[RMDB]
RNA sequence: GGGAACGACUCGAGUAGAGUCGAAAAGAUAUGGACGGGGCAUAUUCACGAUUCAGACAUGAUCAAGACUCGGAAACGAGUCGAACGAUCAACAGCUGACGGUCGUGAAUAUGCCCCGUCCUAAGUCCGAAAAUAGUACGUUCGCGUACUAUUUUCGAAAAGAAACAACAACAACAAC
Reactivity to DMS in 0.01 (KOAc 150mM, MgCl2 10mM, bicine 150mM(pH8.5), 24C), signal-to-noise 4, nucleotides 027 to 126: g020a090u010a300u020g000g000a010c010g000g020g010g030c060a000u000a020u000u000c010a010c000g020a010u000u000c000a020g000a050c080a250u000g000a010u000c010a100a300g020a010c000u000c000g010g000a100a130a300c010g010a010g020u000c000g020a050a270c300g000a010u000c010a040a070c300a130g020c010u000g000a030c300g000g000u010c000g000u000g000a000a020u000a020u000g030c000c000c000c040g000u020c000c000u020a000a050g020u010c030
Chemical mapping of a 177-nucleotide RNA with DMS. The reactions ran in a buffer of 150 mM KOAc, 10 mM MgCl2 and 150 mM bicine (pH 8.5), at 24 C. DMS adducts were read by reverse transcription with MarathonRT.